[RMDB]
The record gives the reactivity of an RNA of 177 nucleotides to 2A3 and DMS. It was measured as part of the RMDB libraries RFM100 and RFMREP. Values cover nucleotides 27 to 126. 2A3 adducts were read by reverse transcription with SuperScript II with manganese. The RNA was probed in 150 mM KOAc, 10 mM MgCl2 and 150 mM bicine (pH 8.5) at 24 C.
RNA sequence: GGGAACGACUCGAGUAGAGUCGAAAAACGAGCGGGAGGCCUUCACGGGCUGCACCGCUGGCCGACCCUGAUCUUCUGUGAAGGGUUCGAGUUGGAGCACGCCUGUCGGGACCCGAAAGAUGGUGAAAGGACUAGUUAUUUUCGAAUAACUAGUCCUAAAAGAAACAACAACAACAAC
Reactivity to 2A3 in 0.01 (KOAc 150mM, MgCl2 10mM, bicine 150mM(pH8.5), 24C), signal-to-noise 9, nucleotides 027 to 126: a010c090g010a030g040c020g000g020g000a050g070g120c010c010u090u100c090a020c030g000g000g000c010u010g010c050a030c010c020g000c000u000g020g020c020c040g010a010c000c010c000u000g010a020u020c080u280u080c160u300g060u050g030a020a020g010g020g000u020u100c010g000a010g010u080u250g060g000a030g020c030a010c130g010c020c010u040g030u040c030g000g020g040a050c000c010c020g020a040a040a000g070a030u130g010g090u100g060a190a120
Reactivity to DMS in 0.01 (KOAc 150mM, MgCl2 10mM, bicine 150mM(pH8.5), 24C), signal-to-noise 8, nucleotides 027 to 126: a100c070g010a080g010c020g020g000g000a240g010g000c000c010u010u000c240a060c140g010g000g010c010u000g000c060a190c000c010g010c020u000g010g010c200c060g000a070c010c000c000u010g000a170u010c020u020u010c210u040g010u000g000a250a070g000g000g010u000u010c020g010a070g010u000u020g030g000a090g010c040a050c170g010c020c010u010g000u000c140g010g000g010a130c010c000c000g010a040a060a080g010a050u000g000g000u010g010a110a140